Structure probing data (2A3) for a 207-nucleotide construct. The 2A3 profile rests on 925 reads. The reactions ran in a buffer of 150 mM KOAc, 10 mM MgCl2 and 150 mM bicine (pH 8.5), at 24 C. The data come from the RNA Mapping Database (RMDB), library RNAMAK. Values cover nucleotides 27 to 156.
RNA sequence: GGGAACGACUCGAGUAGAGUCGAAAAGGGGUCAAGACCAACAGCGCUUAAGAGCGUUGAAAUACACUGAAGCCUCCACGGUGUAUGGAGCUUGAAGGCGACAUGGUCUUGACGGAGGCACCCAAAAUCAACUAGACUGUUCGCAGUCUAGUUGAAAGGGCAUGUGAAGGUUCGCCUUCACAUGCCCAAAAGAAACAACAACAACAAC
Reactivity to 2A3 in 0.01 (KOAc 150mM, MgCl2 10mM, bicine 150mM(pH8.5), 24C), signal-to-noise 1, nucleotides 027 to 156: g030g000g170g000u000c000a000a010g020a010c000c020a100a050c220a240g000c000g010c070u250u080a160a030g020a000g040c000g040u040u000g000a000a000a000u000a000c000a000c020u020g010a090a010g030c000c010u040c000c010a000c030g000g010u000g000u000a000u030g000g020a000g000c000u020u020g010a070a000g100g030c020g000a000c050a170u300g000g000u000c000u030u000g000a010c000g000g010a000g000g000c000a000c010c000c020a030a050a000a080u010c000a000a000c000u000a000g000a000c000u000g080u130u060c300g070c160a020g000u000c000u030a000g000u000u000g000a000a000a000